[RMDB]
RNA sequence: GGGAACGACUCGAGUAGAGUCGAAAAGAUAUGGAACUCUGAUGACCUUUAACCGCACUCGGAAACGAGUGGCGGUGAUGAGCAAGGAGUUCCUAAGUCAAAACAUAUUCAGUUCGCUGAAUAUGAACUAUGUAGCGUCCUUCGGGACGCUACAUAGAAAAGAAACAACAACAACAAC
Reactivity to 2A3 in 0.01 (KOAc 150mM, MgCl2 10mM, bicine 150mM(pH8.5), 24C), signal-to-noise 1, nucleotides 027 to 126: g020a000u060a000u120g000g010a000a000c020u040c000u020g120a160u300g170a260c030c040u110u170u300a060a010c010c010g020c000a000c010u020c000g110g000a010a040a000c000g000a010g010u000g170g000c040g000g000u010g000a010u120g030a000g060c010a010a000g000g000a000g010u020u000c000c000u000a000a040g000u000c020a000a000a090a120c000a000u020a000u030u010c030a000g050u020u100c300g060c170u040g020a010a000u010a030u020g020a060a020
Reactivity to DMS in 0.01 (KOAc 150mM, MgCl2 10mM, bicine 150mM(pH8.5), 24C), signal-to-noise 1, nucleotides 027 to 126: g030a050u000a240u000g000g000a000a010c000u000c000u020g000a150u030g000a150c150c050u000u000u000a300a050c000c000g010c000a040c000u000c000g000g000a070a020a090c000g010a020g020u020g030g030c000g000g030u000g000a090u020g020a080g070c020a130a250g010g010a020g000u000u000c000c010u020a010a070g000u000c060a110a060a110a230c000a030u000a000u000u020c020a020g020u000u000c180g050c020u000g000a000a000u000a000u000g000a050a150

Chemical mapping of a 177-nucleotide RNA with 2A3 and DMS. The 2A3 profile rests on 1,165 reads. Conditions: 150 mM KOAc, 10 mM MgCl2 and 150 mM bicine (pH 8.5), 24 C. For 2A3 the reverse transcriptase was SuperScript II with manganese. For DMS, 736 sequencing reads were counted. Values cover nucleotides 27 to 126.